[RMDB]
RNA sequence: GGGAACGACUCGAGUAGAGUCGAAAAGCUUAAUAACCUGCGCUGAGCCCUUCUCCCCCAACUUGCCUGUGUCCUAGGGAAUUGGAAGGUCAUCCUUCACAGGAUCGUGUGGAAGUCCUGCUCGGGGUCCAAACAUGGUAAUUCGUUACCAUGUUAAGAUCAUGCUAUCAUUCGUGAUAGCAUGAUCAAAAGAAACAACAACAACAAC
Reactivity to 2A3 in 0.01 (KOAc 150mM, MgCl2 10mM, bicine 150mM(pH8.5), 24C), signal-to-noise 2, nucleotides 027 to 156: g010c020u070u080a070a060u090a130a180c000c030u070g020c050g020c060u040g040a040g010c000c030c000u080u100c130u050c020c010c010c010c010a030a000c020u020u030g030c000c010u050g000u010g040u090c010c000u020a060g040g000g050a070a050u090u050g020g010a030a010g020g020u100c020a030u060c010c030u100u050c040a020c000a040g010g030a030u050c090g020u060g010u020g120g040a000a060g060u020c010c010u010g010c000u000c010g010g000g010g000u000c030c030a030a020a000c000a000u000g010g000u000a020a010u050u040c060g010u010u000a000c000c000a000u000g000u010u010a010a010
Reactivity to DMS in 0.01 (KOAc 150mM, MgCl2 10mM, bicine 150mM(pH8.5), 24C), signal-to-noise 2, nucleotides 027 to 156: g000c020u030u000a080a100u000a110a090c050c000u000g010c050g030c080u000g010a130g020c020c010c040u000u010c010u000c040c000c000c020c020a060a060c090u000u010g010c030c010u000g020u010g000u000c030c030u000a140g000g040g000a060a110u010u020g020g000a080a060g030g030u020c060a070u010c040c010u000u000c040a060c060a050g030g010a030u010c070g030u030g020u000g020g010a080a110g050u000c020c030u010g000c030u000c040g030g010g000g010u000c030c040a110a030a010c000a010u010g010g030u010a010a090u000u000c300g000u000u000a010c000c010a020u010g000u000u000a040a110

About this RNA
Chemical mapping of a 207-nucleotide RNA with 2A3 and DMS. The reactions ran in a buffer of 150 mM KOAc, 10 mM MgCl2 and 150 mM bicine (pH 8.5), at 24 C. For 2A3 the reverse transcriptase was SuperScript II with manganese. For DMS the reverse transcriptase was MarathonRT.